[RMDB]
RNA sequence: GGGAACGACUCGAGUAGAGUCGAAAAGAUAUGGAGUGUUGAUAAUUCGAGAGAUCGGAAACGAUGGAAUGAAUAUCACUGCACUCCUAAGUCGGCGCACAUGGUAGCGUUCGCGCUACCAUGUGAACAUACGGUGUUCCUUCGGGAACACCGUAUGAAAAGAAACAACAACAACAAC
Reactivity to 2A3 in 0.01 (KOAc 150mM, MgCl2 10mM, bicine 150mM(pH8.5), 24C), signal-to-noise 2, nucleotides 027 to 126: g020a000u030a030u130g040g000a020g020u000g020u120u040g020a040u040a300a300u100u030c050g020a020g010a000g010a220u010c010g010g030a040a060a020c010g010a000u030g060g090a060a060u140g000a000a020u020a010u060c030a020c220u110g000c010a000c010u030c000c000u000a070a020g050u020c010g060g120c070g000c030a000c000a000u010g000g000u010a010g020c010g010u050u110c300g000c020g000c070u000a020c000c000a010u000g010u010g010a000a020
Reactivity to DMS in 0.01 (KOAc 150mM, MgCl2 10mM, bicine 150mM(pH8.5), 24C), signal-to-noise 5, nucleotides 027 to 126: g000a020u020a300u000g010g000a020g030u000g020u000u000g000a020u000a080a180u000u000c010g020a120g020a300g000a030u010c000g010g000a120a080a180c020g010a010u000g000g010a190a110u000g000a010a010u000a000u000c000a060c300u000g000c000a020c010u000c010c010u000a050a100g000u000c010g010g000c290g010c010a020c000a010u000g000g030u000a010g000c000g010u000u010c210g020c010g010c000u000a010c000c000a010u000g010u000g010a030a170